[RMDB]
The record gives the reactivity of an RNA of 177 nucleotides to 2A3 and DMS.

RNA sequence: GGGAACGACUCGAGUAGAGUCGAAAAACGUCUACGCGGAUAGCUUCGUUAUCCGCGGGGACGAGGUCCGGCAGAUCGCGCCGGGGCAGACGGGCAAGAUAGCGGACUACAAUUAUAAGUUGCCCGACAUUUUGUAAUAAUUCGUUAUUACAAAAUGAAAAGAAACAACAACAACAAC
Reactivity to 2A3 in 0.01 (KOAc 150mM, MgCl2 10mM, bicine 150mM(pH8.5), 24C), signal-to-noise 7, nucleotides 027 to 126: a000c010g000u000c010u030a020c000g000c000g000g000a000u000a010g010c040u230u200c210g040u030u010a000u000c000c000g010c000g000g000g010g000a000c010g000a040g020g110u000c000c000g010g050c020a040g040a270u170c060g020c020g020c110c010g000g000g020g070c020a020g030a130c020g010g000g000c010a020a010g050a160u090a040g090c080g040g050a030c030u090a070c120a090a060u220u120a060u080a220a080g090u030u010g030c000c010c000g020a000
Reactivity to DMS in 0.01 (KOAc 150mM, MgCl2 10mM, bicine 150mM(pH8.5), 24C), signal-to-noise 9, nucleotides 027 to 126: a120c020g010u000c000u000a100c000g010c000g000g000a020u000a010g010c050u010u010c250g010u000u000a010u000c000c000g020c000g000g000g010g000a020c000g010a110g010g000u000c010c010g010g010c020a120g010a080u010c120g010c140g010c010c010g010g000g000g010c130a100g000a150c030g010g010g010c010a040a060g010a100u000a070g010c100g000g010a080c090u010a090c160a070a090u010u010a080u010a080a140g000u000u000g010c000c000c000g010a200
The 2A3 profile rests on 19,611 reads. It was measured as part of the RMDB library OK2TRN. High DMS reactivity at an A or C suggests that its Watson-Crick edge is free.